[RMDB]
RNA sequence: GGGAACGACUCGAGUAGAGUCGAAAAUGAAGAAUUUGUUAACCAAAGAGUUACUAACAAUAUGCAAGGUAUUCGCGGUAAAAAUGCCGUCAAUGCGCCCUUGCAAUGAUGAUUUUUCCACGACUGCUUGCCAUGGUUGAUGUAAAUCUAAAACAACGAGAGUAGUAUUCUUCGGAAUACUACUCUCAAAAGAAACAACAACAACAAC
Reactivity to DMS in 0.01 (KOAc 150mM, MgCl2 10mM, bicine 150mM(pH8.5), 24C), signal-to-noise 2, nucleotides 027 to 156: u010g030a110a170g040a080a100u000u000u010g030u000u010a110a080c020c030a070a300a080g000a080g000u020u000a060c000u000a080a140c030a040a090u010a070u010g020c020a010a010g080g000u000a060u000u010c020g010c040g020g040u010a010a020a090a150a160u000g040c110c010g020u010c090a050a080u000g020c030g000c300c030c070u050u010g000c040a060a030u000g000a060u000g000a090u040u000u000u010u010c020c020a040c000g000a010c040u000g010c070u000u020g010c000c040a050u000g000g000u000u000g020a150u000g030u000a020a080a080u000c020u000a020a050a060a070c040a130a110c180
Reactivity to 2A3 in 0.01 (KOAc 150mM, MgCl2 10mM, bicine 150mM(pH8.5), 24C), signal-to-noise 5, nucleotides 027 to 156: u160g020a010a130g050a050a050u090u100u070g010u060u070a040a050c030c020a100a150a030g030a030g010u050u050a020c040u080a180a040c030a070a060u060a050u120g010c000a000a000g020g000u060a040u010u040c030g000c010g040g050u130a050a110a070a070a050u130g080c110c010g020u040c010a010a040u040g040c030g090c070c040c050u060u080g000c000a010a010u030g010a010u000g030a050u000u050u040u020u040c030c020a030c000g060a020c030u010g040c010u050u050g030c040c010a070u100g080g000u000u020g020a040u060g040u060a020a050a040u050c030u180a030a190a030a040c040a030a030c050
An RNA of 207 nucleotides, treated with DMS and 2A3 and read out base by base. Conditions: 150 mM KOAc, 10 mM MgCl2 and 150 mM bicine (pH 8.5), 24 C. Values are in units of 0.01, from 0 to 300, in steps of 10. The 2A3 profile rests on 3,189 reads.